[RMDB]
RNA sequence: GGGAACGACUCGAGUAGAGUCGAAAAGAUAUGGAAGGUGGGACAUGCUAUACAGGUCGGAAACGACCUGAUAGCAACAGCCCACUUCCUAAGUCAAAACCUUAGGACGCUUCGGCGUCCUAAGGAACAUGAGUUACAGGUUCGCCUGUAACUCAUGAAAAGAAACAACAACAACAAC
Reactivity to DMS in 0.01 (KOAc 150mM, MgCl2 10mM, bicine 150mM(pH8.5), 24C), signal-to-noise 5, nucleotides 027 to 126: g000a030u000a300u000g000g010a000a010g020g020u010g010g000g000a050c080a210u010g010c000u000a000u000a120c010a010g010g020u000c000g000g000a090a110a210c010g010a010c010c000u000g000a000u000a000g000c000a020a040c180a140g000c000c000c000a020c010u000u000c000c010u000a050a140g010u000c030a070a070a090a160c000c000u000u000a000g000g000a010c000g010c000u000u010c180g020g000c000g020u000c000c000u000a000a000g000g010a020a060
Reactivity to 2A3 in 0.01 (KOAc 150mM, MgCl2 10mM, bicine 150mM(pH8.5), 24C), signal-to-noise 4, nucleotides 027 to 126: g020a020u050a020u100g010g050a020a040g300g120u110g030g010g020a050c090a200u070g000c010u020a000u070a230c000a010g010g000u010c010g000g010a080a080a070c000g000a000c000c000u000g000a000u000a010g000c000a000a000c030a000g040c000c000c000a000c000u000u000c000c000u000a030a000g030u010c020a010a040a070a200c000c000u000u000a000g000g000a000c000g000c020u050u090c300g150g000c000g000u050c010c000u000a000a000g000g000a000a010

Chemical mapping of a 177-nucleotide RNA with DMS and 2A3.
For DMS, 5,830 sequencing reads were counted.
The 2A3 profile rests on 10,209 reads.
Reactivities are rounded to 0.1 and cut off at 0 and 3.